About this RNA
Conditions: 150 mM KOAc, 10 mM MgCl2 and 150 mM bicine (pH 8.5), 24 C. Structure probing data (2A3 and DMS) for a 177-nucleotide construct. Reactivities are rounded to 0.1 and cut off at 0 and 3. The DMS profile rests on 28,439 reads. Values cover nucleotides 27 to 126. It was measured as part of the RMDB library OK1LIB. For DMS the reverse transcriptase was MarathonRT.
RNA sequence: GGGAACGACUCGAGUAGAGUCGAAAAUCGACCCCAGAGGGAUAAAAGGCUUGGCUGGCAAGAGGGAGGUCUCGAACCAUCGAUCGAUCGUGCAGUCACUGUGGAACCUCUUACCGACUGCGCUACACGCGCAUUAUAAUUUCGAUUAUAAUGCGCGAAAAGAAACAACAACAACAAC
Reactivity to 2A3 in 0.01 (KOAc 150mM, MgCl2 10mM, bicine 150mM(pH8.5), 24C), signal-to-noise 9, nucleotides 027 to 126: u070c010g040a010c000c000c010c010a020g050a070g080g050g010a050u130a140a180a040a030g050g010c030u050u060g040g000c030u030g030g020c040a050a020g020a070g060g040g000a060g010g020u020c020u020c070g030a050a050c020c020a080u080c030g070a060u050c040g030a050u040c040g020u030g020c010a010g020u040c020a020c140u120g030u120g090g030a050a070c000c020u050c010u050u090a060c020c050g020a020c010u020g010c010g000c030u050a040c090a010
Reactivity to DMS in 0.01 (KOAc 150mM, MgCl2 10mM, bicine 150mM(pH8.5), 24C), signal-to-noise 9, nucleotides 027 to 126: u010c090g010a130c070c010c000c030a070g010a110g010g010g010a080u020a030a080a110a090g010g000c050u000u010g000g020c010u000g000g010c070a060a060g010a070g010g000g010a060g010g000u010c020u010c060g000a090a080c090c070a080u010c060g010a060u010c080g010a080u030c100g020u010g000c020a030g010u010c020a080c120u000g010u030g010g010a090a140c070c030u020c030u010u010a120c070c080g000a040c010u000g000c040g010c020u020a070c180a190